Structure probing data (2A3 and DMS) for a 207-nucleotide construct. For DMS, 3,092 sequencing reads were counted. The 2A3 profile rests on 2,146 reads. The RNA was probed in 150 mM KOAc, 10 mM MgCl2 and 150 mM bicine (pH 8.5) at 24 C.

RNA sequence: GGGAACGACUCGAGUAGAGUCGAAAAUAUAUAGAUAAUUCUAAUUGCUCGUCUGUAUUCGAAAUCGCGACUCCGGAACCAAUUACUGAUAAUGAAGAAGAUCAUACUGUCACAUAUACUAGUGAAAAUAUUAAUACAGUAAGUACAACAGACGAGAAGUGUUACAUAUGUUCGCAUAUGUAACACUAAAAGAAACAACAACAACAAC
Reactivity to 2A3 in 0.01 (KOAc 150mM, MgCl2 10mM, bicine 150mM(pH8.5), 24C), signal-to-noise 3, nucleotides 027 to 156: u110a000u030a020u080a080g020a050u170a170a200u300u040c030u080a150a150u240u170g020c020u010c020g000u000c000u000g060u040a140u070u120c050g050a120a120a080u110c070g010c040g170a050c030u040c070c020g060g040a070a060c020c010a050a060u100u030a040c030u060g090a090u060a160a110u140g040a010a060g070a070a020g030a040u070c040a010u080a080c030u030g020u100c030a000c010a050u260a020u110a120c080u050a040g030u010g060a000a000a150a000u200a020u080u190a030a030u060a030c000a000g020u030a030a000g020u030a020c020a060a000c000a080g000a000c000g010a000g000a000
Reactivity to DMS in 0.01 (KOAc 150mM, MgCl2 10mM, bicine 150mM(pH8.5), 24C), signal-to-noise 2, nucleotides 027 to 156: u020a050u010a240u010a180g010a170u000a080a120u010u000c010u000a110a160u010u010g010c030u000c010g050u010c060u050g000u000a170u000u000c040g010a100a090a110u000c020g000c080g000a120c050u000c080c030g000g000a130a110c060c010a010a150u000u000a120c070u000g010a080u000a070a150u000g020a110a050g010a040a040g000a130u000c050a120u000a020c060u000g000u020c060a300c020a150u000a130u000a230c060u000a100g010u010g000a040a090a030a050u020a060u000u010a090a080u020a090c010a010g020u000a030a060g000u010a070c060a150a040c020a030g020a050c000g030a030g030a010